[RMDB]
RNA sequence: GGGAACGACUCGAGUAGAGUCGAAAAAUAAAGUAGUCUCCUGCAGCGUCUGAGGUUUCCGUUGCAGUCCUCGGUACCAGGACCUCGGCGUGGCCUAGCGAGUUAUGGCGACGAAGGCCGUGAAAAAGUAUACCACUAUCUUCGGAUAGUGGUAUACAAAAGAAACAACAACAACAAC
Reactivity to 2A3 in 0.01 (KOAc 150mM, MgCl2 10mM, bicine 150mM(pH8.5), 24C), signal-to-noise 2, nucleotides 027 to 126: a000u190a020a100a030g080u100a010g020u000c000u010c070c030u030g010c040a030g020c020g020u000c040u210g030a010g030g050u060u140u020c030c030g050u070u090g020c060a030g090u080c000c000u070c030g060g010u050a070c000c060a040g040g030a020c000c000u000c010g000g020c000g000u020g000g000c000c010u010a030g020c020g050a030g050u120u130a120u200g110g010c020g010a110c020g020a090a050g070g010c020c020g030u100g080a120a010a000a010a000
Reactivity to DMS in 0.01 (KOAc 150mM, MgCl2 10mM, bicine 150mM(pH8.5), 24C), signal-to-noise 3, nucleotides 027 to 126: a070u000a030a080a100g020u000a090g020u010c030u000c020c020u000g010c050a150g000c010g030u000c030u010g010a030g010g010u010u010u000c030c020g010u000u000g000c030a070g000u010c050c040u000c070g000g010u010a060c090c070a080g010g000a030c030c010u000c020g010g000c020g000u010g000g000c020c060u000a130g000c040g000a070g010u000u010a050u000g000g010c020g000a100c020g000a160a130g000g000c000c010g010u020g010a020a040a070a050a070